[RMDB]
RNA sequence: GGGAACGACUCGAGUAGAGUCGAAAACGGGCUCGUCGGCCUGAAGCUGUCGUCGGCCGGCUGAGCGCAGGGUUUGCCCCUGCGUCGGCGCUACGGCGGUUGUGCGCGGCGCGCGUCUAUAAUGAAACACUCAGGUGAGGUUCGCCUCACCUGAGUGAAAAGAAACAACAACAACAAC
Reactivity to DMS in 0.01 (KOAc 150mM, MgCl2 10mM, bicine 150mM(pH8.5), 24C), signal-to-noise 2, nucleotides 027 to 126: c050g000g000g000c010u000c010g000u010c020g010g020c050c020u020g010a100a070g000c070u000g030u000c030g010u010c130g040g010c020c100g010g010c040u010g000a140g000c010g000c000a030g020g000g000u000u010u010g020c300c000c000c000u010g010c000g030u000c020g010g020c000g020c000u000a010c010g020g000c000g010g030u000u000g020u030g010c060g010c030g010g000c020g010c120g000c030g010u000c060u010a120u000a040a110u010g000a140a120a200
Reactivity to 2A3 in 0.01 (KOAc 150mM, MgCl2 10mM, bicine 150mM(pH8.5), 24C), signal-to-noise 1, nucleotides 027 to 126: c030g030g000g000c020u010c030g020u000c010g050g020c000c000u050g050a040a000g040c000u020g010u020c030g000u020c050g070g000c060c030g050g050c050u030g060a060g080c020g000c000a000g070g020g020u060u300u300g070c010c000c000c000u000g000c000g000u010c010g000g010c030g000c130u040a000c020g000g000c000g000g040u020u010g040u090g000c130g030c060g090g020c000g000c000g010c000g050u020c020u070a210u030a140a300u250g120a100a060a020
Annotation: Structure probing data (DMS and 2A3) for a 177-nucleotide construct. Reactivities are given for positions 27 through 126. It was measured as part of the RMDB library OK2TRN. The RNA was probed in 150 mM KOAc, 10 mM MgCl2 and 150 mM bicine (pH 8.5) at 24 C. For DMS, 1,881 sequencing reads were counted.